An RNA of 177 nucleotides, treated with DMS and read out base by base. For DMS, 936 sequencing reads were counted. The reactions ran in a buffer of 150 mM KOAc, 10 mM MgCl2 and 150 mM bicine (pH 8.5), at 24 C.
RNA sequence: GGGAACGACUCGAGUAGAGUCGAAAAUUAAAGAACUAAGAUCUGCACUGAACAAGUCACGGUGGUCGGAAACGACGCCGAAAGGCCAGGUCAUAGUUCCGACCUGAAGACUUGACGGGUCAAAAAAGAGAUAAUACCACUUCGGUGGUAUUAUCUCAAAAGAAACAACAACAACAAC
Reactivity to DMS in 0.01 (KOAc 150mM, MgCl2 10mM, bicine 150mM(pH8.5), 24C), signal-to-noise 1, nucleotides 027 to 126: u000u000a130a090a030g000a000a040c010u000a060a080g000a000u000c000u010g000c040a040c030u010g010a050a110c030a000a000g010u000c000a300c010g020g030u000g000g010u000c000g000g000a080a080a150c000g020a010c000g030c010c000g010a020a040a100g030g040c030c070a010g000g000u000c010a110u000a000g000u010u000c010c080g000a020c010c000u000g010a090a060g000a010c000u000u000g000a300c030g000g000g020u010c020a000a020a050a100a130a110